[RMDB]
RNA sequence: GGGAACGACUCGAGUAGAGUCGAAAAGGCCUCCGAGGCUUCUUGGCUGAGUCGAGGGCCUGGGCAUUGUGCAUGAAGCCCACCACAUCGUCCAGACUCCAGCACAGGGCAUCUGCCAACAGGACCAGUGACUCAUCAAAGUACUCGGCCACCAUGAGUACUAGCUGCUGUUCGCAGCAGCUAGUACAAAAGAAACAACAACAACAAC
Reactivity to 2A3 in 0.01 (KOAc 150mM, MgCl2 10mM, bicine 150mM(pH8.5), 24C), signal-to-noise 1, nucleotides 027 to 156: g020g040c020c090u060c100c180g070a090g000g010c020u060u000c090u140u080g040g010c010u000g000a000g000u000c000g050a100g000g020g030c040c000u000g000g010g000c170a100u040u130g060u150g040c090a040u290g110a010a020g000c050c010c000a040c050c010a090c020a100u250c050g040u040c060c030a050g030a140c020u050c090c050a040g080c070a060c010a010g000g000g050c080a040u060c000u000g000c010c000a100a020c000a040g000g020a120c000c000a060g010u030g260a040c000u010c000a050u010c000a040a020a020g000u090a240c000u000c000g000g030c040c000a010c030c050a010u180g110a030

An RNA of 207 nucleotides, treated with 2A3 and read out base by base.
2A3 adducts were read by reverse transcription with SuperScript II with manganese.
As a SHAPE reagent, 2A3 marks flexible, mostly unpaired nucleotides at the ribose 2'-OH.